Record summary: This 177-nucleotide RNA was probed chemically with DMS and 2A3. Source: RMDB library TTRDEL, as collected in RNAgym. The DMS profile rests on 834 reads. Conditions: 150 mM KOAc, 10 mM MgCl2 and 150 mM bicine (pH 8.5), 24 C.
RNA sequence: GGGAACGACUCGAGUAGAGUCGAAAAGAUAUGGAUGGGAGUGAUGACCAACUGUGGGCUCGGAAACGAGCCGUAACAUCAGUUGCAAGCUUAGUCCUAAGUCAAAAGAAGGCGUUCGCGCCUUCAACUACUCUCUCAGCUUCGGCUGAGAGAGUAGAAAAGAAACAACAACAACAAC
Reactivity to DMS in 0.01 (KOAc 150mM, MgCl2 10mM, bicine 150mM(pH8.5), 24C), signal-to-noise 2, nucleotides 027 to 126: g020a050u000a300u000g000g000a030u000g010g030g000a030g060u000g000a130u010g010a240c300c000a000a000c030u010g030u000g010g010g010c010u000c010g000g000a110a110a100c000g000a010g000c010c000g010u000a030a090c140a030u000c000a000g000u020u000g000c050a060a220g000c030u030u030a300g010u000c000c000u000a090a120g010u010c060a100a110a080a060g000a010a010g000g000c000g010u000u010c190g030c000g030c030c000u000u000c010a020a070
Reactivity to 2A3 in 0.01 (KOAc 150mM, MgCl2 10mM, bicine 150mM(pH8.5), 24C), signal-to-noise 1, nucleotides 027 to 126: g020a040u100a020u140g000g000a020u060g050g300g060a060g020u060g110a300u150g060a070c070c000a000a020c000u010g010u010g040g000g000c010u010c020g060g000a050a050a010c000g000a000g000c020c000g000u020a020a030c030a160u200c010a000g010u020u020g040c040a080a070g010c000u010u070a020g000u030c020c000u000a160a030g020u020c040a080a100a030a070g010a000a010g000g040c000g060u060u110c220g060c010g010c100c000u000u010c010a000a000